[RMDB]
RNA sequence: GGGAACGACUCGAGUAGAGUCGAAAAAUUGGGGGUUCCCCAGACUGUGCCAUGUGUGUAGUUUAUAUAUAGGAAAAAGUAUGUCAGUUAACAGUCAGUUAAUCCGUUCUCCAGCCCCUGUGGUACAGCUAAUAGAUGUAUUCGUACAUCUAUUAGCAAAAGAAACAACAACAACAAC
Reactivity to DMS in 0.01 (KOAc 150mM, MgCl2 10mM, bicine 150mM(pH8.5), 24C), signal-to-noise 9, nucleotides 027 to 126: a090u010u010g010g010g010g010g010u000u000c010c000c010c260a130g000a080c060u000g010u000g010c030c030a070u000g000u010g010u000g010u000a050g010u000u010u010a050u010a070u010a100u000a130g010g010a050a050a090a100a120g010u000a040u010g010u000c070a090g010u000u000a050a050c030a080g010u010c090a090g010u000u000a030a060u010c080c020g000u000u000c020u000c010c040a150g000c030c010c010c050u000g020u000g010g010u000a060c160a110
Reactivity to 2A3 in 0.01 (KOAc 150mM, MgCl2 10mM, bicine 150mM(pH8.5), 24C), signal-to-noise 3, nucleotides 027 to 126: a000u120u100g010g000g010g010g000u020u030c010c000c020c010a030g040a060c010u030g000u030g020c030c010a110u110g100u010g020u000g020u060a070g050u040u230u000a150u040a020u020a010u070a120g000g030a150a100a030a030a000g060u050a070u110g070u080c050a040g010u020u030a040a010c020a020g120u090c020a010g000u050u020a040a060u040c040c020g010u040u020c020u000c020c000a040g040c020c010c010c020u040g010u020g020g020u040a060c030a030